[RMDB]
RNA sequence: GGGAACGACUCGAGUAGAGUCGAAAAGAGUAGCUGGGAUUAUAGAUGCAUGCCACCAUGCCCGGCUACAGUCUACACUUUUUUCUUUUUUUUUUUUGAGAUGGAGUCGCACUCUGUCGCCAGGCUGGAGUGCAGUGGCGCAAUCUUGGCUCACUGACGUAUAAUCACCUUUCGAGGUGAUUAUACGAAAAGAAACAACAACAACAAC
Reactivity to 2A3 in 0.01 (KOAc 150mM, MgCl2 10mM, bicine 150mM(pH8.5), 24C), signal-to-noise 2, nucleotides 027 to 156: g040a000g030u030a010g000c030u010g000g010g010a090u110u110a080u250a250g090a040u110g040c080a050u140g050c060c000a050c000c050a030u140g020c000c000c000g010g000c000u000a000c000a010g010u000c030u110a050c040a040c010u000u070u040u080u130u040c090u160u240u020u070u080u030u060u010u010u020u060u110g050a050g010a000u070g040g040a030g030u030c030g050c040a020c040u030c030u010g040u090c040g030c060c000a020g000g000c010u070g010g050a050g010u020g030c010a020g060u050g030g030c040g000c020a010a090u030c000u070u050g030g010c020u010c050a040c060u100g040a050